[RMDB]
The data come from the RNA Mapping Database (RMDB), library OK2TST.
The record gives the reactivity of an RNA of 177 nucleotides to DMS.
For DMS, 673 sequencing reads were counted.
Conditions: 150 mM KOAc, 10 mM MgCl2 and 150 mM bicine (pH 8.5), 24 C.
Reactivities are given for positions 27 through 126.
Reactivities are rounded to 0.1 and cut off at 0 and 3.
RNA sequence: GGGAACGACUCGAGUAGAGUCGAAAACGUCAAACGAGAUAACGAAAGCAAAAAGCGCGCCGGAGAGAACAUUCGGCCAUAUCAGGGGCAGAGUGACCGCGCGAAAGGCCAGAAACCUGUUGGCGCAGCAUGCCAUCAGGUUCGCCUGAUGGCAUGCAAAAGAAACAACAACAACAAC
Reactivity to DMS in 0.01 (KOAc 150mM, MgCl2 10mM, bicine 150mM(pH8.5), 24C), signal-to-noise 1, nucleotides 027 to 126: c030g010u000c030a080a100a140c160g040a110g000a210u010a060a070c030g000a210a150a010g000c000a040a120a100a150a160g010c040g040c000g040c170c040g000g000a140g000a130g000a040a080c040a040u000u000c000g000g030c000c000a040u000a100u020c250a000g000g000g000g010c010a000g010a020g000u000g000a070c060c020g010c040g000c000g000a020a030a140g010g010c000c010a040g010a060a110a020c030c000u000g010u000u010g010g020c030g010c230a210